[RMDB]
RNA sequence: GGGAACGACUCGAGUAGAGUCGAAAACGUCAAGAAGAAGAACCUUUGGCCUUAAGACAAGAAGGGAACAUAGGUUGAUAAGCUGCUUCUGUCCUCCAGAGAGCUCGUUUACAUUCUUAUGGAGAAAAUAGCUGGUCAUGUUCGCAUGACCAGCUAUAAAAGAAACAACAACAACAAC
Reactivity to DMS in 0.01 (KOAc 150mM, MgCl2 10mM, bicine 150mM(pH8.5), 24C), signal-to-noise 1, nucleotides 027 to 126: c040g000u020c050a010a100g000a010a020g000a010a050g020a040a030c060c000u000u000u040g000g010c010c000u000u040a040a200g040a160c300a090a130g010a030a080g030g050g000a160a070c000a000u010a060g020g000u000u000g000a080u000a120a070g000c100u000g010c000u000u000c020u000g000u000c040c000u000c000c000a040g000a040g000a050g060c130u040c200g040u040u000u060a080c120a100u090u000c000u000u000a080u000g020g000a020g000a150a080a110
Reactivity to 2A3 in 0.01 (KOAc 150mM, MgCl2 10mM, bicine 150mM(pH8.5), 24C), signal-to-noise 1, nucleotides 027 to 126: c050g040u000c070a100a000g000a000a000g090a060a000g070a100a100c000c010u040u040u070g230g000c000c000u000u020a010a090g090a160c010a190a000g270a090a040g000g000g000a020a020c000a000u090a050g090g000u000u070g030a120u000a110a000g000c000u040g000c000u100u000c000u000g130u070c040c000u000c000c000a090g100a000g000a030g140c060u050c100g100u050u130u170a050c010a110u000u160c140u060u300a300u140g000g000a000g000a000a000a000